[RMDB]
This 207-nucleotide RNA was probed chemically with DMS and 2A3.
RNA sequence: GGGAACGACUCGAGUAGAGUCGAAAAACGCAUUACGCUAUCCAAUGCCAAGCUAUGGCUAUGCUGGUUGGUACGCUCAAGGGCGAUCGGGUCAGAAAAUCUACCGGUCACAUGCCUCAGACGUAUCGGGAGCUUCCUCGGAAGCGAAGUUGGAAACGCUAAAUACAGAGUUCGCUCUGUAUUUAGCAAAAGAAACAACAACAACAAC
Reactivity to DMS in 0.01 (KOAc 150mM, MgCl2 10mM, bicine 150mM(pH8.5), 24C), signal-to-noise 1, nucleotides 027 to 156: a080c020g000c020a080u000u010a070c020g000c020u010a090u010c030c000a080a140u020g050c020c030a030a170g030c090u000a130u000g000g110c040u000a080u010g000c050u030g030g030u010u000g050g010u000a000c030g020c020u000c060a090a100g020g040g030c000g000a010u000c000g010g010g010u010c070a090g010a150a110a080a090u000c020u000a080c000c000g000g000u000c000a030c040a100u000g020c030c010u080c040a060g000a020c050g000u000a000u000c000g030g000g000a120g000c010u000u000c010c010u030c080g040g000a040a030g030c000g010a000a090g040u000u000g020g010a120a060a110c220
Reactivity to 2A3 in 0.01 (KOAc 150mM, MgCl2 10mM, bicine 150mM(pH8.5), 24C), signal-to-noise 4, nucleotides 027 to 156: a000c110g030c090a080u220u220a090c100g020c040u090a100u070c020c010a030a070u140g000c010c010a050a030g020c100u120a100u170g130g000c020u060a040u120g020c000u010g110g130u030u040g010g000u000a000c000g000c040u000c050a050a030g010g020g000c010g010a000u010c000g000g020g100u100c080a040g160a060a210a010a110u070c030u080a040c000c000g010g000u020c020a020c030a080u200g000c020c000u000c010a010g010a010c000g000u000a000u020c000g010g020g000a020g010c000u020u000c020c030u070c080g050g000a000a000g000c010g030a070a010g000u020u010g000g040a050a070a010c090
2A3 adducts were read by reverse transcription with SuperScript II with manganese.
For DMS, 2,231 sequencing reads were counted.